[RMDB]
RNA sequence: GGGAACGACUCGAGUAGAGUCGAAAAAAACUUUUGUGACUUGCUGAAACGGGACUAAUCUCCUCACCGAGGCUAAGCAAGUAAAAUACGCCUCUCAUAUCCUUACCUGAGGGUCGUAAGGAAAUAACCUGCAACGCUUCCUUCGGGAAGCGUUGAACAGUUAUCCAGGAUUCGUCCUGGAUAACUGAAAAGAAACAACAACAACAAC
Reactivity to 2A3 in 0.01 (KOAc 150mM, MgCl2 10mM, bicine 150mM(pH8.5), 24C), signal-to-noise 2, nucleotides 027 to 156: a000a000a000c100u090u120u150u180g090u120g040a010c000u000u010g020c010u040g040a060a080a140c060g020g010g050a020c010u100a150a120u120c100u100c070c040u090c040a080c040c080g040a050g080g000c100u080a110a000g000c000a010a010g030u080a030a020a010a100u060a020c020g020c000c000u000c020u000c020a020u020a050u250c000c050u050u020a050c000c010u010g040a010g010g020g030u020c000g000u010a000a020g040g020a030a150a070u070a020a100c020c060u040g040c000a010a010c020g000c020u000u000c000c000u040u040c130g030g000g000a000a000g000c000g000u000u000g000a020a000